[RMDB]
An RNA of 207 nucleotides, treated with 2A3 and read out base by base. 2A3 adducts were read by reverse transcription with SuperScript II with manganese. The RNA was probed in 150 mM KOAc, 10 mM MgCl2 and 150 mM bicine (pH 8.5) at 24 C. Values cover nucleotides 27 to 156.

RNA sequence: GGGAACGACUCGAGUAGAGUCGAAAAAGAUUACCAAUCGAGUGGGAUUAUAGACUCUUGGAUUAUUUUACAGAUACAAGUCAUUUGCCAGGAGUGAGGAAAAUUGCUUGACAACUGAGUUAUCUCACCAUGUUAAUUUAUGCAUUGGAAAACUCUGCAGCCAGGGAAAAUUCGUUUUCCCUGGCUGAAAAGAAACAACAACAACAAC
Reactivity to 2A3 in 0.01 (KOAc 150mM, MgCl2 10mM, bicine 150mM(pH8.5), 24C), signal-to-noise 1, nucleotides 027 to 156: a000g060a000u080u100a000c010c010a000a090u070c000g000a040g010u020g000g030g000a000u040u030a030u100a180g100a070c030u000c000u000u000g000g000a000u030u060a040u120u300u090u020a030c010a040g020a120u090a150c010a000a080g020u010c000a000u070u050u130g010c000c000a000g000g150a050g010u060g060a130g010g010a060a010a100a130u070u000g000c000u050u220g000a070c040a030a040c040u070g040a030g100u040u000a000u000c030u060c000a000c100c040a000u020g080u120u200a190a010u140u130u000a160u180g010c070a060u090u090g000g070a040a210a090a170c030u000c050u000g000